[RMDB]
RNA sequence: GGGAACGACUCGAGUAGAGUCGAAAAGCACUGCCUGUUUAUGGUGGUCGUUAAAGUCAUAACCAUAAGAUGAGCGUUGGAUUGAGGAAGUUCUAUGAAAGUUUAUCAUAGGAUAUGGGCGACCGAGCUAUAAUAAUUAAUUCGUUAAUUAUUAUAGAAAAGAAACAACAACAACAAC
Reactivity to 2A3 in 0.01 (KOAc 150mM, MgCl2 10mM, bicine 150mM(pH8.5), 24C), signal-to-noise 5, nucleotides 027 to 126: g010c010a030c110u070g040c020c000u100g040u130u110u050a050u090g010g020u010g020g010u030c010g000u030u170a080a080a030g040u020c030a040u060a210a070c000c010a030u030a050a050g110a090u130g050a010g040c030g050u080u140g060g060a100u010u090g010a030g010g060a090a070g010u000u000c010u010a020u020g040a080a070a130g090u090u230u210a120u060c000a000u020a010g010g010a010u030a050u140g010g030g010c010g010a010c010c020g000a010g010
Reactivity to DMS in 0.01 (KOAc 150mM, MgCl2 10mM, bicine 150mM(pH8.5), 24C), signal-to-noise 6, nucleotides 027 to 126: g020c080a110c060u010g010c010c010u000g020u010u010u010a020u010g000g010u010g010g010u000c030g020u010u020a040a070a140g000u010c050a070u020a130a070c020c010a040u010a040a060g010a060u010g010a050g000c040g010u010u010g000g000a090u010u010g000a110g010g010a110a160g000u000u000c000u000a000u000g000a020a110a210g010u040u050u030a060u000c010a000u000a010g000g000a020u010a040u010g000g000g000c040g010a080c030c030g000a080g010